An RNA of 207 nucleotides, treated with 2A3 and read out base by base. It was measured as part of the RMDB library OK3TST. The RNA was probed in 150 mM KOAc, 10 mM MgCl2 and 150 mM bicine (pH 8.5) at 24 C.
RNA sequence: GGGAACGACUCGAGUAGAGUCGAAAACUGCCAACCAAAGCCUUAAAGUCGAUUUUGCUCAUGGUGCGAUAGCUGGCUAUAAAGUAUCCGGCUCUAAAGUUGCAUCCUUUAAAGGUCAGCUUUAUUUAGAUGGCGCAAAUCUGUCGGACGGUACGGCUGGUAAGACCUGGUUCGCCAGGUCUUACCAAAAAGAAACAACAACAACAAC
Reactivity to 2A3 in 0.01 (KOAc 150mM, MgCl2 10mM, bicine 150mM(pH8.5), 24C), signal-to-noise 1, nucleotides 027 to 156: c010u010g010c020c070a040a080c030c060a220a240a000g060c020c020u110u210a180a080a000g010u010c000g050a070u070u000u050u030g010c010u030c000a010u070g100g080u130g140c050g070a050u050a030g010c000u000g050g000c010u030a030u050a050a090a000g000u010a000u050c060c020g040g000c040u000c110u200a070a200a000g000u020u010g000c010a010u090c000c060u060u090u100a070a170a080g070g000u060c000a000g000c000u000u040u000a080u010u160u010a070g010a150u030g000g030c110g000c050a000a030a030u110c150u150g100u010c020g060g010a050c010g030g000u000a040c090g010g000c000
For 2A3 the reverse transcriptase was SuperScript II with manganese. The 2A3 profile rests on 466 reads.